The record gives the reactivity of an RNA of 177 nucleotides to 2A3 and DMS. For DMS the reverse transcriptase was MarathonRT. 2A3 adducts were read by reverse transcription with SuperScript II with manganese. Reactivities are given for positions 27 through 126. The reactions ran in a buffer of 150 mM KOAc, 10 mM MgCl2 and 150 mM bicine (pH 8.5), at 24 C. It was measured as part of the RMDB library OK2TST.

RNA sequence: GGGAACGACUCGAGUAGAGUCGAAAAGUUGCUAGAGCACACUUGCAAUACUUUACUGGAAGUGACACGAUCUUAGGUGGGGAUAAUUCUCGUUCAAUUUUAGCUUCUGAACAUUCAGUGAUGUGCGAUCCCGGUAGCGAUUCGUCGCUACCGGGAUAAAAGAAACAACAACAACAAC
Reactivity to 2A3 in 0.01 (KOAc 150mM, MgCl2 10mM, bicine 150mM(pH8.5), 24C), signal-to-noise 1, nucleotides 027 to 126: g000u050u010g000c010u020a040g000a060g140c030a020c010a010c040u020u040g040c010a000a040u000a150c030u120u080u050a050c010u030g000g090a010a040g020u010g040a030c030a030c130g040a090u080c030u010u180a110g140g050u030g000g000g010g050a000u050a090a140u120u070c090u020c060g070u170u090c000a050a110u000u020u140u160a020g010c000u060u000c020u130g060a060a020c040a060u030u180c060a080g160u030g110a050u050g050u030g030c000g000
Reactivity to DMS in 0.01 (KOAc 150mM, MgCl2 10mM, bicine 150mM(pH8.5), 24C), signal-to-noise 2, nucleotides 027 to 126: g020u000u000g020c060u000a020g000a160g000c050a040c060a060c030u010u000g010c000a080a080u000a050c130u010u010u000a080c100u000g000g000a060a050g020u000g000a110c140a090c110g010a050u010c110u000u000a050g020g040u010g000g010g010g000a140u010a040a110u020u020c080u000c070g030u010u000c070a040a040u000u010u020u000a090g000c100u000u020c020u000g000a070a070c140a160u000u000c050a060g030u020g000a090u010g000u000g010c030g000